[RMDB]
RNA sequence: GGGAACGACUCGAGUAGAGUCGAAAAUAGAGGAUAUGUCUCAAUUUGUUCUGCAUUAAUGCCACAGUGGGGAUGGAGGCCAGGCCGUGGCCAGAGCAGAUACGUAGGCCCAUGAAAUUGAUGAACUUUUGGAUGACUGAUUCGUCAGUCAUCCAAAAAAAGAAACAACAACAACAAC
Reactivity to DMS in 0.01 (KOAc 150mM, MgCl2 10mM, bicine 150mM(pH8.5), 24C), signal-to-noise 1, nucleotides 027 to 126: u010a070g090a130g000g000a050u010a130u010g000u020c010u000c000a120a030u010u000u000g000u000u000c000u000g000c140a020u000u010a070a100u010g000c000c020a020c000a030g000u000g010g000g010g000a080u070g090g000a070g030g030c000c050a110g000g000c030c030g010u000g000g000c000c090a050g000a040g010c070a020g070a040u000a090c070g030u010a130g000g040c010c030c000a150u030g000a030a150a020u000u000g030a030u120g000a110a090c130u030
Reactivity to 2A3 in 0.01 (KOAc 150mM, MgCl2 10mM, bicine 150mM(pH8.5), 24C), signal-to-noise 1, nucleotides 027 to 126: u140a050g110a000g040g140a000u200a020u190g100u070c000u020c050a020a070u000u010u010g010u040u000c000u000g040c040a040u100u110a220a040u140g020c000c000a050c020a010g030u110g010g010g020g020a040u130g180g000a040g020g120c000c000a000g040g000c000c050g040u000g000g000c000c010a000g000a010g000c000a000g000a040u130a020c080g000u020a050g030g070c000c000c030a030u170g120a000a000a200u120u020g070a080u090g100a070a020c050u050